Chemical mapping of a 177-nucleotide RNA with DMS and 2A3.
DMS (dimethyl sulfate) methylates the pairing face of unpaired adenines and cytosines.
The data come from the RNA Mapping Database (RMDB), library OK2TST.
Reactivities are rounded to 0.1 and cut off at 0 and 3.
The RNA was probed in 150 mM KOAc, 10 mM MgCl2 and 150 mM bicine (pH 8.5) at 24 C.
RNA sequence: GGGAACGACUCGAGUAGAGUCGAAAAAACAACACUCUGGGAGAAGAAGGCAAGAGAGCUAUGUGCAGCCCAAACAGAGAGCACUUGCCCAGCAUUAGCACUUGCCCAGCAUGAUCUAGCCCGCAUCUACUGUAUGGGAAUUCGUUCCCAUACAGUAAAAAGAAACAACAACAACAAC
Reactivity to DMS in 0.01 (KOAc 150mM, MgCl2 10mM, bicine 150mM(pH8.5), 24C), signal-to-noise 7, nucleotides 027 to 126: a060a030c110a070a060c060a070c120u000c020u000g020g000g000a100g000a060a070g010a170a100g020g000c010a020a020g010a040g000a080g000c010u000a030u010g020u000g000c070a140g000c030c020c030a070a080a090c070a040g000a080g000a060g000c010a060c040u000u000g010c020c010c070a100g010c060a080u000u000a060g020c050a180c040u000u000g020c020c000c020a050g010c130a080u000g000a050u000c090u010a090g010c000c010c020g010c190a080u010c120
Reactivity to 2A3 in 0.01 (KOAc 150mM, MgCl2 10mM, bicine 150mM(pH8.5), 24C), signal-to-noise 4, nucleotides 027 to 126: a000a000c060a020a010c010a010c030u040c010u020g010g020g020a100g020a110a020g040a070a010g040g010c000a030a000g030a010g010a020g040c010u040a030u080g080u030g040c060a100g050c030c030c000a040a080a010c040a010g150a000g010a000g100c000a010c040u020u030g000c000c000c000a010g010c010a070u140u170a030g000c010a010c050u020u070g010c000c020c000a010g030c020a040u110g010a040u060c030u070a040g050c010c010c020g050c030a080u030c020